[RMDB]
RNA sequence: GGGAACGACUCGAGUAGAGUCGAAAACAUGGUAUGGCCUCGCAUCCGGCCUACCGACAGAAUCAACAACUUAGGAUGCGGUGGGCGAGAGCCCUAAGAAGGAGUCUCCGCGCCUGGGGAGCUCCGUAUGACUUAAUGUAUUACCAGGCGAAUACAAACUCAUACUGGGUUUCGACCCAGUAUGAGUAAAAGAAACAACAACAACAAC
Reactivity to 2A3 in 0.01 (KOAc 150mM, MgCl2 10mM, bicine 150mM(pH8.5), 24C), signal-to-noise 1, nucleotides 027 to 156: c000a050u110g000g000u120a160u300g010g000c000c010u090c000g000c000a000u040c000c020g010g020c010c000u000a000c000c000g010a010c070a030g180a080a060u240c120a040a210c030a010a020c060u080u290a000g010g010a010u020g010c000g000g050u060g000g000g000c010g000a060g030a030g060c000c000c000u000a010a060g140a040a000g000g020a000g020u040c010u000c000c010g010c000g010c000c000u000g000g000g000g000a000g020c000u010c000c000g020u000a070u000g040a040c000u000u190a160a030u250g060u250a080u120u120a050c000c000a010g000g000c000g000a000a000u010a010c000a000a190